This 207-nucleotide RNA was probed chemically with 2A3 and DMS. For 2A3 the reverse transcriptase was SuperScript II with manganese. Source: RMDB library OK3TST, as collected in RNAgym.

[RMDB]
RNA sequence: GGGAACGACUCGAGUAGAGUCGAAAAAGGGACUGAAAAGCUGAGUGUGGUUGUGCUUCUCAUACAAACUGAGCAGCAAGACAUACAUCUCAUAGGUAAAACAGUGAAGUACGCUAUUUGGAGUUUCACAGGAAUCCAGUAGAACUGACAACAGAUACUACCCACUGAUGUUCGCAUCAGUGGGUAGAAAAGAAACAACAACAACAAC
Reactivity to 2A3 in 0.01 (KOAc 150mM, MgCl2 10mM, bicine 150mM(pH8.5), 24C), signal-to-noise 3, nucleotides 027 to 156: a000g040g040g020a020c060u090g040a080a080a050a050g110c120u040g010a020g020u030g000u020g030g070u070u060g050u030g000c030u030u020c020u020c010a090u140a190c090a010a230a040c090u020g000a000g000c000a010g010c000a080a000g030a030c020a060u100a030c010a080u120c040u030c010a040u070a040g060g000u140a040a080a000a010c030a040g000u030g100a050a000g050u050a020c060g000c080u010a080u170u150u110g060g000a050g030u030u100u130c080a070c060a110g030g030a020a000u010c000c040a020g000u040a000g030a070a020c190u200g010a030c040a090a000c010a090g180a160u300a130
Reactivity to DMS in 0.01 (KOAc 150mM, MgCl2 10mM, bicine 150mM(pH8.5), 24C), signal-to-noise 1, nucleotides 027 to 156: a020g040g000g000a050c060u030g020a050a060a040a100g050c080u020g000a140g070u000g060u010g020g000u000u010g040u010g030c300u000u000c000u000c020a040u060a300c030a150a030a230c150u000g030a020g030c000a040g000c000a030a040g020a090c010a170u000a060c020a010u020c020u020c020a080u000a050g040g030u000a020a020a050a060c020a140g010u030g010a050a120g030u000a060c080g000c040u000a090u000u000u000g060g000a130g050u000u000u000c040a060c090a000g010g000a100a100u000c010c010a080g070u010a050g030a040a130c000u000g010a070c000a050a050c030a050g060a120u000a110